Conditions: 150 mM KOAc, 10 mM MgCl2 and 150 mM bicine (pH 8.5), 24 C. The record gives the reactivity of an RNA of 177 nucleotides to 2A3 and DMS. For DMS the reverse transcriptase was MarathonRT. Values cover nucleotides 27 to 126. It was measured as part of the RMDB library OK2TRN.
RNA sequence: GGGAACGACUCGAGUAGAGUCGAAAAUUUAUUACAAAACUAUGAGUGAUUUGCAUAGGAAAGACAAGUUUGAAGGGUAUAAAUCCAACUGCAAAUUGAUGAAAGUGAAACCGAAGGAAACAGAGGAAUUAUCUCACACUUUCGAGUGUGAGAUAAUAAAAGAAACAACAACAACAAC
Reactivity to 2A3 in 0.01 (KOAc 150mM, MgCl2 10mM, bicine 150mM(pH8.5), 24C), signal-to-noise 1, nucleotides 027 to 126: u010u000u040a050u130u200a020c060a030a230a050a050c020u090a130u240g010a000g070u060g020a030u000u030u010g000c010a020u010a060g000g000a000a000a020g090a020c010a010a040g040u080u190u210g120a080a070g290g000g000u130a120u080a210a140a010u020c010c000a010a000c020u010g000c000a000a050a000u000u070g040a030u050g030a080a010a030g050u040g040a070a020a000c020c020g000a000a030g060g010a040a050a000c060a000g000a020g060g070a010
Reactivity to DMS in 0.01 (KOAc 150mM, MgCl2 10mM, bicine 150mM(pH8.5), 24C), signal-to-noise 3, nucleotides 027 to 126: u020u010u000a040u020u030a170c060a080a100a160a080c060u010a020u010g020a200g020u000g000a020u020u000u000g000c030a040u000a270g000g000a030a120a110g010a120c120a090a150g010u010u000u000g010a090a100g010g000g020u000a100u000a080a110a060u000c000c010a020a180c300u000g010c000a010a010a000u010u000g000a060u000g000a060a060a050g000u000g000a070a090a160c040c010g030a210a150g000g000a090a070a060c090a020g010a220g000g000a110